[RMDB]
RNA sequence: GGGAACGACUCGAGUAGAGUCGAAAAUUGUACACCUUCGGGUGUACAAGCUGUCUAGUCGCUAGCAAACGAUCAAAGCUAGCGACUAGACUUUAUAGAUCGCGACGUGCGCUUUCGAGCGCACGAAUAAGCGUAUCCCUUUCGAGGGAUACGCUUAAAAAGAAACAACAACAACAAC
Reactivity to DMS in 0.01 (KOAc 150mM, MgCl2 10mM, bicine 150mM(pH8.5), 24C), signal-to-noise 1, nucleotides 027 to 126: u000u000g000u000a000c000a000c000c000u010u000c300g040g000g010u010g010u000a000c000a000a050g010c210u000g000u000c010u000a000g000u010c020g000c000u000a000g010c000a060a070a090c240g010a150u000c110a050a110a070g000c000u000a000g000c000g000a000c000u000a000g000a020c000u000u000u000a050u000a120g010a090u000c060g000c060g000a170c020g000u000g000c020g010c000u000u000u010c180g020a030g000c000g010c000a000c030g000a030a030
The record gives the reactivity of an RNA of 177 nucleotides to DMS.